The record gives the reactivity of an RNA of 207 nucleotides to 2A3 and DMS. For DMS, 1,921 sequencing reads were counted.
[RMDB]
RNA sequence: GGGAACGACUCGAGUAGAGUCGAAAAUAGAAAAAACGGUUAUUUCUCCACGGAAGCUGCUAAACGUAGAUAUUCUAUCGCCGUAGCUAAGAAAUUUGGUGAAGAUAUCGAGCUUAGACGCAAAUAUAAAAUUGAGUUAGAAGGAUUACCUCCUAGAAACUGACUAGGAAUUCGUUCCUAGUCAGUUAAAAGAAACAACAACAACAAC
Reactivity to 2A3 in 0.01 (KOAc 150mM, MgCl2 10mM, bicine 150mM(pH8.5), 24C), signal-to-noise 2, nucleotides 027 to 156: u040a010g110a000a120a020a000a010a010c120g050g050u060u010a050u030u070u000c050u010c060c040a050c030g030g090a050a060g010c030u140g000c000u070a060a000a000c010g010u030a020g000a010u020a020u100u090c000u060a300u000c020g000c020c000g010u050a030g020c030u100a170a000g130a060a170a120u270u140u290g000g000u020g000a020a000g020a010u000a070u000c020g020a000g000c010u000u000a020g070a060c030g000c020a000a200a000u290a040u070a080a100a030a070u130u090g020a010g030u100u100a040g080a140a020g130g030a050u150u220a050c030c040u030c000c000u050a070g090a040
Reactivity to DMS in 0.01 (KOAc 150mM, MgCl2 10mM, bicine 150mM(pH8.5), 24C), signal-to-noise 1, nucleotides 027 to 156: u030a140g000a000a060a120a050a150a100c050g000g000u000u020a090u000u010u020c010u010c050c040a100c090g040g000a170a180g030c030u010g050c020u010a040a040a040c000g000u000a230g000a030u000a050u000u000c020u000a140u000c000g030c040c030g070u000a180g020c080u020a080a140g030a150a050a170u000u000u000g040g040u000g000a100a130g000a060u000a020u000c000g000a230g050c020u010u010a100g000a050c080g000c020a020a050a030u010a170u000a020a040a060a140u040u000g010a120g020u000u000a100g020a070a030g020g000a290u000u000a060c020c040u000c010c010u000a080g000a110
Overview: 2A3 adducts were read by reverse transcription with SuperScript II with manganese. Source: RMDB library OK3TST, as collected in RNAgym. The reactions ran in a buffer of 150 mM KOAc, 10 mM MgCl2 and 150 mM bicine (pH 8.5), at 24 C.